[RMDB]
RNA sequence: GGGAACGACUCGAGUAGAGUCGAAAAAAAAGAUAUGGACCUGAAACUCCUUGGAUUUAUAGUCACAGUAACUCGGAAACGAGUUAUCACAGCUAUUGUCAGGAGGAGUACGGGUCCUAAGUCAAAACAUAACGUGGAUCUUCGGAUCCACGUUAUGAAAAGAAACAACAACAACAAC
Reactivity to DMS in 0.01 (KOAc 150mM, MgCl2 10mM, bicine 150mM(pH8.5), 24C), signal-to-noise 1, nucleotides 027 to 126: a040a090a040a000g000a040u000a300u000g000g000a000c000c000u000g010a180a210a080c000u000c000c000u000u000g000g000a000u000u000u000a010u000a070g000u000c040a170c300a300g010u000a000a010c030u000c000g000g000a110a040a070c000g030a000g000u000u000a010u000c050a080c300a290g010c010u000a010u000u000g050u000c000a040g000g000a000g000g000a030g000u000a220c040g030g000g000u000c000c010u000a000a110g000u010c040a100a100a260a100
Description: Structure probing data (DMS) for a 177-nucleotide construct. DMS adducts were read by reverse transcription with MarathonRT. Conditions: 150 mM KOAc, 10 mM MgCl2 and 150 mM bicine (pH 8.5), 24 C. For DMS, 597 sequencing reads were counted.